Source: RMDB library OK1LIB, as collected in RNAgym. The record gives the reactivity of an RNA of 177 nucleotides to 2A3 and DMS. Conditions: 150 mM KOAc, 10 mM MgCl2 and 150 mM bicine (pH 8.5), 24 C. 2A3 adducts were read by reverse transcription with SuperScript II with manganese. Values are in units of 0.01, from 0 to 300, in steps of 10.
[RMDB]
RNA sequence: GGGAACGACUCGAGUAGAGUCGAAAAACGGUCGACGCGACGGCCGGCCUCGAGAACGGAACGGAACUUCGGAUCGCUGGCGUCACCGAUCCGGUUGCCGACGGAACCGCCUUCGCGUUCCGAGAGCCCGUGGUAUGGACUUCGGUCCAUACCACGGAAAAGAAACAACAACAACAAC
Reactivity to 2A3 in 0.01 (KOAc 150mM, MgCl2 10mM, bicine 150mM(pH8.5), 24C), signal-to-noise 4, nucleotides 027 to 126: a000c030g000g000u040c050g010a040c010g060c030g050a160c010g070g030c090c050g030g000c020c030u070c070g180a170g010a110a030c020g000g050a030a030c040g010g050a030a010c050u160u130c080g040g000a060u040c010g000c060u030g100g030c080g110u110c020a020c070c030g000a020u050c010c000g030g000u000u120g010c020c010g050a100c030g020g000a070a070c020c020g030c010c010u070u070c050g060c000g020u020u000c000c000g020a050g000a020g080c020
Reactivity to DMS in 0.01 (KOAc 150mM, MgCl2 10mM, bicine 150mM(pH8.5), 24C), signal-to-noise 1, nucleotides 027 to 126: a180c000g000g030u000c070g000a000c010g010c060g010a100c020g020g080c080c090g070g010c000c000u000c050g040a230g000a140a130c000g060g040a220a150c000g000g000a070a020c020u010u040c080g000g000a000u000c060g020c180u000g000g010c190g040u060c050a090c220c000g000a000u000c000c020g000g030u050u000g000c010c060g030a190c040g000g000a010a150c090c040g000c000c010u010u000c140g000c050g020u030u040c000c000g000a040g000a250g010c080